[RMDB]
RNA sequence: GGGAACGACUCGAGUAGAGUCGAAAAGCUGCCUCUGACGUCCUUCUCCCCCGGAAACGGGGCCGAAGGGUGGUAAGGCGAGUCGCCUGGCGCUGGCACGGGUAUGCGUGGAGGUCGACCCUGGCCGAUUAGGAUUUAGGUUCGCCUAAAUCCUAAUAAAAGAAACAACAACAACAAC
Reactivity to DMS in 0.01 (KOAc 150mM, MgCl2 10mM, bicine 150mM(pH8.5), 24C), signal-to-noise 9, nucleotides 027 to 126: g010c050u000g010c010c010u000c070u000g010a120c060g010u000c000c000u000u000c010u000c300c000c000c000c000g000g000a080a060a190c010g020g000g010g030c050c060g010a010a010g010g000g010u000g010g010u000a100a060g000g010c010g010a080g010u000c060g010c010c010u000g010g020c060g010c060u000g010g010c040a100c080g000g000g010u000a050u010g010c050g020u000g000g010a060g010g010u000c040g010a070c030c010c010u000g000g000c020c030g010
Reactivity to 2A3 in 0.01 (KOAc 150mM, MgCl2 10mM, bicine 150mM(pH8.5), 24C), signal-to-noise 5, nucleotides 027 to 126: g020c020u040g010c010c010u050c190u230g110a040c010g040u030c010c000u010u010c010u040c000c000c000c010c000g010g000a000a020a010c000g000g000g000g000c000c010g010a000a000g010g000g010u020g000g050u060a060a030g030g010c030g010a040g080u080c040g030c010c010u050g040g000c040g010c090u090g070g000c060a060c110g050g010g040u120a070u180g010c040g010u050g010g060a030g010g000u060c040g040a130c000c000c030u030g060g020c010c010g010
Source information:
The record gives the reactivity of an RNA of 177 nucleotides to DMS and 2A3. For DMS, 26,865 sequencing reads were counted. 2A3 adducts were read by reverse transcription with SuperScript II with manganese. DMS adducts were read by reverse transcription with MarathonRT. It was measured as part of the RMDB library OK2TRN.